[RMDB]
RNA sequence: GGGAACGACUCGAGUAGAGUCGAAAAGUGUCGGACUCGCAAGUGCGAAUAUAUUUUAACCCUAAACAGGGAGUGGAAAGCACGUCCUGGAGUGGAAAACACGUCCAUCCCAAAGCGAGAAAUGAAAAGUGUGAUCACGAUUCGUCGUGAUCACACUAAAAGAAACAACAACAACAAC
Reactivity to 2A3 in 0.01 (KOAc 150mM, MgCl2 10mM, bicine 150mM(pH8.5), 24C), signal-to-noise 1, nucleotides 027 to 126: g070u050g120u160c040g020g010a040c010u000c010g000c030a100a000g040u000g060c000g040a230a010u050a000u000a050u040u210u020u090a120a080c000c000c000u060a120a160a090c080a050g000g000g000a000g020u130g040g040a150a010a000g030c040a010c020g010u080c020c000u010g000g010a000g000u020g020g090a100a070a000a060c010a010c050g040u080c000c000a000u030c030c000c010a020a020a000g000c010g010a000g100a020a010a040u280g040a100a110a060
Reactivity to DMS in 0.01 (KOAc 150mM, MgCl2 10mM, bicine 150mM(pH8.5), 24C), signal-to-noise 1, nucleotides 027 to 126: g000u000g000u000c090g000g060a260c010u000c010g010c000a120a120g000u000g010c000g000a070a110u000a050u040a040u000u000u000u000a050a110c000c000c000u000a060a030a080c210a110g030g000g030a050g000u000g000g000a090a100a210g000c030a010c000g000u000c170c050u000g030g000a130g040u000g060g020a070a000a050a070c120a030c230g030u030c020c020a080u000c020c000c040a010a010a090g000c000g000a000g030a090a170a240u060g010a080a210a070